RNA sequence: GGGAACGACUCGAGUAGAGUCGAAAACACUCAAUCGUAAUUAUGUUUUUACUGGUUAUCAUAUAACCAAAAAUAGUAAAGUGCAGCUCGGUGAGUACAUUUUCGAGCGCAUUGAUUAUAGUGAUGCAAGGAGAUCAGUUCGCUGAUCUCAAAAGAAACAACAACAACAAC
Reactivity to DMS in 0.01 (KOAc 150mM, MgCl2 10mM, bicine 150mM(pH8.5), 24C), signal-to-noise 9, nucleotides 027 to 129: c060a060c050u030c170a050a030u030c070g030u050a060a050u030u030a050u010g050u030u030u010u010u030a070c170u000g020g010u010u010a040u000c210a060u000a300u020a040a000c000c030a010a020a010a030a030u040a090g020u020a050a060a040g000u010g000c000a090g040c030u000c010g000g000u030g000a030g020u070a130c170a130u020u020u030u020c030g000a030g010c000g030c000a010u000u030g000a000u030u020a060u000a070g030u030g010a040u040g040c080a060a110g060
Reactivity to 2A3 in 0.01 (KOAc 150mM, MgCl2 10mM, bicine 150mM(pH8.5), 24C), signal-to-noise 9, nucleotides 027 to 129: c060a010c010u050c040a040a060u050c030g110u120a090a070u090u070a110u130g180u050u060u010u030u040a100c070u030g010g010u010u020a020u060c090a020u110a020u050a270a010c000c000a040a030a000a020a040u140a020g080u080a020a100a030g010u000g010c020a030g000c090u000c010g020g010u040g040a040g060u130a100c070a250u070u070u030u100c000g000a010g000c010g000c000a000u010u080g000a010u010u070a060u050a100g080u050g070a060u110g060c040a070a040g150

The record gives the reactivity of an RNA of 170 nucleotides to DMS and 2A3. Source: RMDB library 15KLIB, as collected in RNAgym. Conditions: 150 mM KOAc, 10 mM MgCl2 and 150 mM bicine (pH 8.5), 24 C. For DMS the reverse transcriptase was MarathonRT.